[RMDB]
The record gives the reactivity of an RNA of 177 nucleotides to DMS and 2A3. For DMS, 1,370 sequencing reads were counted. Conditions: 150 mM KOAc, 10 mM MgCl2 and 150 mM bicine (pH 8.5), 24 C. Source: RMDB library RFM100, as collected in RNAgym.
RNA sequence: GGGAACGACUCGAGUAGAGUCGAAAAUUGCUCUGCGAUGGCCGUCGAACACAUACACUUGAGAAUUCUGAGUGAGGGUACUGUAGCAUCGGGUUACUGUACACCAAUCCAGACGAUUCUCAGGUGGCAUGUGGUACCCCUUCGGGGGUACCACAUGAAAAGAAACAACAACAACAAC
Reactivity to DMS in 0.01 (KOAc 150mM, MgCl2 10mM, bicine 150mM(pH8.5), 24C), signal-to-noise 1, nucleotides 027 to 126: u000u020g000c010u030c000u010g000c070g030a120u020g020g000c000c000g010u000c020g000a060a220c120a000c050a060u000a030c010a000c030u000u000g000a010g010a000a000u000u000c000u020g000a120g000u000g000a300g020g010g070u010a000c000u000g000u010a000g010c000a130u040c190g010g070g000u000u000a000c030u000g000u000a000c000a100c000c010a000a180u000c030c030a010g000a050c300g000a200u010u000c000u000c000a010g020g000u000g000g000
Reactivity to 2A3 in 0.01 (KOAc 150mM, MgCl2 10mM, bicine 150mM(pH8.5), 24C), signal-to-noise 2, nucleotides 027 to 126: u110u080g040c000u000c060u100g000c010g030a040u110g110g030c100c040g080u040c030g040a110a010c080a000c000a070u130a060c000a000c000u010u000g000a000g000a020a050u140u010c000u000g080a120g190u050g010a010g000g020g000u000a000c000u050g000u000a000g060c020a080u300c180g170g250g000u000u000a000c000u000g030u000a000c170a220c040c000a000a010u000c000c000a030g000a020c020g100a010u000u010c000u000c000a000g000g000u000g000g000